[RMDB]
RNA sequence: GGGAACGACUCGAGUAGAGUCGAAAAGCCACUGCCUUCGGGCAGUGGCAAAAGAAAGCGAUUUCUGACCGCUUUUUAGUCUGAAAAAGAUCGAAAGAUCAAAAACGUCAGACUUCGGUCUGACGAAUCAAUAAAAGGGGUUCGCCCCUUUUAUUGAAAAAGAAACAACAACAACAAC
Reactivity to DMS in 0.01 (KOAc 150mM, MgCl2 10mM, bicine 150mM(pH8.5), 24C), signal-to-noise 2, nucleotides 027 to 126: g020c040c000a040c010u010g000c000c000u000u020c200g030g020g030c000a010g080u000g010g040c010a010a010a090a080g010a020a020a010g000c030g010a060u000u000u000c190u030g000a040c050c000g000c010u020u010u000u020u000a080g010u000c010u010g010a060a130a070a120a080g000a010u000c010g000a150a060a170g010a000u020c010a030a040a050a070a200c020g010u020c020a010g000a000c000u000u000c160g050g010u010c010u000g000a020c010g020a010a030
This 177-nucleotide RNA was probed chemically with DMS. Reactivities are given for positions 27 through 126.